Chemical mapping of a 307-nucleotide RNA with 2A3.
[RMDB]
RNA sequence: GGGAACGACUCGAGUAGAGUCGAAAAGUUCGAAGCGUGAGCUUCGAACACUGUGGCUUCGGCCACAGAAGUCACCGGCUUCGGCCGGUGACAGUUCGGCGUGAGCCGAACAAGGAACGGACUACGGUCCGUUCCAGGUGCCGUACGCGGCACCACAGCCUAUCGUGAGAUAGGCUGACCGUGACUACGGUCACGGAACACGAAUCUUCGGAUUCGUGAACAGCCUUGUAGUUUUAGUGGACUUUAGGCUAAAGAAUUUCACUAGUAAAUCUUGCUUCGGCAAGAUUAAAAGAAACAACAACAACAAC
Reactivity to 2A3 in 0.01 (KOAc 150mM, MgCl2 10mM, bicine 150mM(pH8.5), 24C), signal-to-noise 2, nucleotides 027 to 266: g010u000u000c000g000a020a000g000c010g050u070g070a020g000c000u000u000c000g000a000a000c000a000c000u010g000u000g000g000c010u060u040c300g140g010c000c000a010c000a000g000a050a000g000u010c000a000c000c020g010g030c050u130u210c300g180g000c040c000g030g000u000g000a000c000a000g000u000u000c010g010g020c070g070u190g100a020g000c010c000g000a000a000c010a010a100g000g000a000a000c010g000g010a010c020u050a010c300g110g000u020c000c000g000u000u000c010c000a000g000g000u000g000c010c000g000u040a030c300g040c030g200g000c000a010c000c010a020c010a000g000c000c010u010a000u020c020g040u080g050a140g000a010u000a000g000g000c000u000g000a010c000c000g010u000g000a000c000u030a040c210g110g020u000c000a000c000g000g000a010a010c010a000c000g000a000a000u000c000u010u070c110g140g000a010u010u000c000g010u010g010a040a040c020a040g010c000c000u100u040g180u200a030g000u000u040u000u040a000g000u030g000g000a020c000u030u090u040a020g020g000c000u070a050a170a030g090a060a140u150u270u230c020a000c010u040a030g160u220a050
2A3 adducts were read by reverse transcription with SuperScript II with manganese. The RNA was probed in 150 mM KOAc, 10 mM MgCl2 and 150 mM bicine (pH 8.5) at 24 C. The 2A3 profile rests on 2,373 reads. Values cover nucleotides 27 to 266.